[RMDB]
RNA sequence: GGGAACGACUCGAGUAGAGUCGAAAAUACUCAUGGGAAGUCGGCACGACUCCCGACUAACGUGGAUGUCCGCUUUCUGGCUCCAGGCAAAGAGUGUUGGUGCGGACGUUGAGUAGCCGCGCGCCAACAUAGUCGGCAUAUUCGUAUGCCGACUAUGAAAAGAAACAACAACAACAAC
Reactivity to 2A3 in 0.01 (KOAc 150mM, MgCl2 10mM, bicine 150mM(pH8.5), 24C), signal-to-noise 6, nucleotides 027 to 126: u090a020c000u020c020a100u090g020g010g030a160a040g020u030c030g070g220c150a060c130g040a020c030u020c020c000c010g060a050c060u100a110a040c030g050u050g020g020a030u040g080u080c010c000g020c100u060u150u080c040u060g030g000c000u000c000c010a040g080g000c040a050a050a030g100a040g020u070g030u020u010g000g010u030g000c000g000g020a050c010g010u050u060g080a060g020u080a020g050c010c030g000c010g000c000g010c000c010a030a030
Reactivity to DMS in 0.01 (KOAc 150mM, MgCl2 10mM, bicine 150mM(pH8.5), 24C), signal-to-noise 9, nucleotides 027 to 126: u020a010c000u010c010a080u060g000g000g000a070a050g010u000c000g020g000c260a150c090g000a050c040u000c030c000c010g010a060c150u030a090a120c100g010u010g000g000a030u010g000u040c010c020g010c300u020u030u020c140u020g000g010c000u000c010c020a050g000g010c190a070a090a090g010a060g010u000g010u000u010g000g010u010g010c010g010g000a050c070g000u020u010g000a050g020u010a060g000c020c010g000c020g010c030g000c000c010a030a090